[RMDB]
RNA sequence: GGGAACGACUCGAGUAGAGUCGAAAAGAUAUGGACGUUAAUAGGGAGCUCCUCGGAAACGAGAGAGCAUCGAUCUAUACACGUCCUAAGUCAAAGGUUGGUCCUUGGUUCGCCAAGGACCAACCAACAAGAUUGGAGUCUUCGGACUCCAAUCUUGAAAAGAAACAACAACAACAAC
Reactivity to DMS in 0.01 (KOAc 150mM, MgCl2 10mM, bicine 150mM(pH8.5), 24C), signal-to-noise 1, nucleotides 027 to 126: g000a050u000a280u010g000g000a000c010g010u000u000a170a000u010a010g060g000g000a030g030c000u000c000c000u000c000g010g010a030a040a150c000g000a000g000a170g000a000g030c010a040u000c080g020a100u020c010u000a000u000a120c220a030c010g070u000c000c000u010a010a070g000u000c010a090a250a060g010g010u030u000g000g000u000c000c020u050u000g000g010u010u000c280g040c010c000a010a000g030g010a000c000c000a000a000c000c000a030a040